This 177-nucleotide RNA was probed chemically with 2A3 and DMS. 2A3 adducts were read by reverse transcription with SuperScript II with manganese. The data come from the RNA Mapping Database (RMDB), library VIROID. The RNA was probed in 150 mM KOAc, 10 mM MgCl2 and 150 mM bicine (pH 8.5) at 24 C.
RNA sequence: GGGAACGACUCGAGUAGAGUCGAAAAAGGAGGAAAGCAAAGAAAGCAACGGGGCUAGCCGUCAGGUGUUCCACCCCCCGAGAGGGGACGAGUGAGGCUUAUCCCGGGGAACUCGGCGAAUCGUCCCACCACUAUGUUAGUUCGCUAACAUAGUGGUAAAAGAAACAACAACAACAAC
Reactivity to 2A3 in 0.01 (KOAc 150mM, MgCl2 10mM, bicine 150mM(pH8.5), 24C), signal-to-noise 2, nucleotides 027 to 126: a000g110g030a040g010g060a090a040a010g040c060a130a040a120g050a080a140a010g080c030a020a050c020g000g000g020g010c040u030a010g020c020c000g060u040c030a020g040g040u050g090u140u050c030c000a060c020c010c000c000c020c030g030a040g040a040g100g000g000g000a010c030g020a020g030u060g050a060g010g020c010u030u030a070u040c010c000c020g030g040g000g010a020a030c010u000c020g000g020c010g020a010a050u020c000g010u000c020c000c010
Reactivity to DMS in 0.01 (KOAc 150mM, MgCl2 10mM, bicine 150mM(pH8.5), 24C), signal-to-noise 3, nucleotides 027 to 126: a100g010g000a070g000g000a060a050a090g030c060a070a110a120g000a130a080a110g020c070a100a070c080g010g000g000g020c120u000a060g020c010c020g010u010c120a050g020g020u020g010u010u000c070c010a150c060c050c010c020c010c020g000a130g010a150g020g010g010g000a010c080g010a050g010u000g000a210g000g000c060u000u000a080u000c020c000c010g020g000g000g010a040a040c040u000c040g010g020c030g000a030a050u000c020g010u010c000c000c000